[RMDB]
RNA sequence: GGGAACGACUCGAGUAGAGUCGAAAAAACUCCGCUUCGGACUUACAGAUGGAAUGCCAAGGACUUUAGACGAGAUUGGCCAGGUCUAUGGCGUUACUCGUGAACGUAUUCGUCAGAUUGAGUCCAAAUUAAUCCCCAGUUUCGACUGGGGAUUAAUAAAAGAAACAACAACAACAAC
Reactivity to 2A3 in 0.01 (KOAc 150mM, MgCl2 10mM, bicine 150mM(pH8.5), 24C), signal-to-noise 2, nucleotides 027 to 126: a030a000c080u110c060c020g050c070u170u080c090g000g000a000c010u010u030a030c070a060g050a040u070g090g030a130a030u040g000c010c020a050a050g170g010a100c070u150u150u100a080g040a050c020g000a000g070a170u040u210g080g000c000c000a040g000g110u140c130u230a210u080g010g020c020g030u060u040a030c010u060c030g010u060g070a010a020c020g010u020a080u010u030c010g010u000c010a000g040a180u040u050g020a020g010u000c010c000a000a000
Reactivity to DMS in 0.01 (KOAc 150mM, MgCl2 10mM, bicine 150mM(pH8.5), 24C), signal-to-noise 4, nucleotides 027 to 126: a060a070c180u010c010c030g020c290u010u010c150g020g000a040c010u000u000a110c140a100g010a060u000g020g000a030a020u000g010c010c070a050a300g010g010a050c090u000u010u010a100g010a060c020g000a040g020a180u010u010g020g020c000c030a040g000g010u030c140u020a080u000g010g010c000g000u010u000a060c010u000c050g020u000g010a080a070c140g010u010a040u010u000c000g010u000c030a090g010a140u010u010g010a040g000u000c000c000a050a100